[RMDB]
RNA sequence: GGGAACGACUCGAGUAGAGUCGAAAACUGCCUGACCUAUGGCGGCUGCUAUAACCGCGAGCAUGCUAACCAGCUUGGUGAGUGCGGUCGGAUCGCAUCACGUCACCACCGACCCUGACGUGCUGGCGAAAAACAGGGUCUUCGGACCCUGUUUUUCAAAAGAAACAACAACAACAAC
Reactivity to 2A3 in 0.01 (KOAc 150mM, MgCl2 10mM, bicine 150mM(pH8.5), 24C), signal-to-noise 3, nucleotides 027 to 126: c050u040g020c010c000u030g070a150c020c030u100a100u070g070g030c080g010g000c030u010g000c030u110a030u090a300a030c060c040g040c060g030a030g030c010a020u240g060c010u040a040a130c030c010a030g040c050u150u170g050g030u060g050a090g030u160g000c020g060g030u050c010g010g040a090u060c020g020c070a090u090c050a000c050g020u020c060a010c050c000a030c030c000g080a080c010c010c060u030g040a020c060g030u030g070c000u000g020g010c010
Reactivity to DMS in 0.01 (KOAc 150mM, MgCl2 10mM, bicine 150mM(pH8.5), 24C), signal-to-noise 2, nucleotides 027 to 126: c080u000g010c030c000u000g010a050c010c080u020a070u070g010g010c210g020g000c020u000g000c050u000a070u070a130a140c060c060g060c070g010a020g000c020a000u010g010c040u020a160a030c030c020a070g010c180u010u000g000g010u050g000a040g000u000g020c060g000g040u030c120g000g010a100u000c010g000c010a190u000c060a050c030g000u060c010a170c100c020a160c000c000g000a070c090c030c040u020g010a020c060g010u000g040c070u000g030g000c110